The record gives the reactivity of an RNA of 207 nucleotides to 2A3. For 2A3, 757 sequencing reads were counted. 2A3 adducts were read by reverse transcription with SuperScript II with manganese. The RNA was probed in 150 mM KOAc, 10 mM MgCl2 and 150 mM bicine (pH 8.5) at 24 C. It was measured as part of the RMDB library OK3TST.
RNA sequence: GGGAACGACUCGAGUAGAGUCGAAAAAGUCCAUAUGCCCAUCUUUGCUGAGACGGAUGGAUGUUUAUACCCGCUAUGGAUGCCUAUUACUGAAAUGUAAUAGAUGCCUAAUACUCUCUCUCAGGGAGAGAGUUUAGAUGCCUCCAAAGUCUAUGCUAUGCUGAUCAGUAUUCGUACUGAUCAGCAUAAAAGAAACAACAACAACAAC
Reactivity to 2A3 in 0.01 (KOAc 150mM, MgCl2 10mM, bicine 150mM(pH8.5), 24C), signal-to-noise 2, nucleotides 027 to 156: a000g070u050c040c000a000u000a040u170g030c000c000c000a030u010c020u070u080u130g050c040u080g030a020g000a040c030g000g000a000u000g030g000a030u030g030u100u120u010a070u040a060c030c010c010g020c010u030a030u060g000g000a000u000g000c010c000u000a000u000u020a000c000u040g040a120a110a120u090g000u000a000a000u000a020g010a010u100g060c000c000u070a100a030u170a140c000u000c000u000c000u040c000u000c130a170g000g300g000a000g000a000g000a000g000u000u000u000a010g000a020u070g100c000c040u030c020c000a050a140a000g020u000c030u030a050u170g000c010u000